[RMDB]
RNA sequence: GGGAACGACUCGAGUAGAGUCGAAAAUUGCAUAACUGUGGAGAGGAAAUGCCAGAUGGGUACAUUCUGAGUCUGCUCAGUGAUUCAGAUAUGACACCAAACGUGUAUGCUUACUCUGACGAUAUUGAUCAAGGUUUCAUGAUAGUCGAUAAGGUAGUACCUUCAAUCUAUUCGUAGAUUGAAGGUAAAAAGAAACAACAACAACAAC
Reactivity to DMS in 0.01 (KOAc 150mM, MgCl2 10mM, bicine 150mM(pH8.5), 24C), signal-to-noise 7, nucleotides 027 to 156: u010u010g010c030a100u000a050a110c060u010g030u010g010g000a130g020a120g010g000a070a090a070u000g020c010c020a080g010a090u000g000g020g020u010a110c030a080u000u000c010u000g000a060g030u000c010u010g020c170u010c140a170g020u010g020a040u000u000c020a040g020a060u010a060u010g010a130c050a220c030c010a030a090a090c100g010u010g020u000a040u000g010c020u000u000a150c060u000c030u010g020a040c030g010a120u000a140u000u010g010a080u000c030a060a100g030g010u000u000u010c050a070u000g000a090u000a080g010u000c040g010a080u000a060a080g020g010u000a110g010
Reactivity to 2A3 in 0.01 (KOAc 150mM, MgCl2 10mM, bicine 150mM(pH8.5), 24C), signal-to-noise 9, nucleotides 027 to 156: u100u080g020c020a030u040a150a070c030u060g020u070g060g030a040g010a030g030g060a090a070a020u080g020c020c010a030g030a120u070g020g000g020u050a040c010a020u020u000c010u010g000a000g010u010c010u050g100c090u070c130a080g080u050g080a010u020u000c000a000g020a020u090a030u110g030a030c030a050c160c000a030a070a050c060g020u040g020u060a030u070g020c000u020u020a060c040u040c050u090g030a040c040g030a030u030a060u170u150g050a050u050c040a050a060g070g020u030u060u090c050a030u090g060a050u040a040g040u040c020g050a070u040a180a020g070g010u050a030g050